[RMDB]
RNA sequence: GGGAACGACUCGAGUAGAGUCGAAAAAUCAGCAGCACCUGCUGCACAAUGAUAUAGCCGAUGGACUGGAUAAAACAGCGCUUUCGGUGUCGGGGACGCAAUCGCGAUGGACAAGGAGCGAAUCAAAGAUCAUUAAUGAUUUCGAUCAUUAAUGAUCAAAAGAAACAACAACAACAAC
Reactivity to 2A3 in 0.01 (KOAc 150mM, MgCl2 10mM, bicine 150mM(pH8.5), 24C), signal-to-noise 9, nucleotides 027 to 126: a000u050c020a010g000c000a000g000c010a100c090c110u220g000c010u020g020c010a000c040a030a140u140g040a010u050a010u060a150g040c010c010g020a030u030g010g020a020c020u020g020g050a140u150a150a130a020a020c020a010g020c050g020c160u010u040u040c010g020g000u020g030u050c010g010g000g020g000a020c020g010c060a030a070u070c040g000c010g060a050u070g040g020a030c030a060a040g050g010a040g030c030g040a020a010u080c030a040a050a030
Reactivity to DMS in 0.01 (KOAc 150mM, MgCl2 10mM, bicine 150mM(pH8.5), 24C), signal-to-noise 9, nucleotides 027 to 126: a060u010c060a070g010c020a020g010c030a220c230c190u000g010c010u000g010c030a070c150a080a110u010g010a060u000a090u010a150g010c020c010g010a040u000g000g010a120c020u000g000g010a110u010a040a060a110a120c040a040g000c070g020c030u000u000u000c020g010g010u000g010u010c060g010g000g000g010a110c080g010c120a060a070u000c060g010c030g010a080u000g010g010a070c100a060a090g010g010a120g010c040g000a070a070u010c120a050a080a110
The record gives the reactivity of an RNA of 177 nucleotides to 2A3 and DMS. For 2A3, 26,655 sequencing reads were counted. Conditions: 150 mM KOAc, 10 mM MgCl2 and 150 mM bicine (pH 8.5), 24 C. For DMS, 22,331 sequencing reads were counted.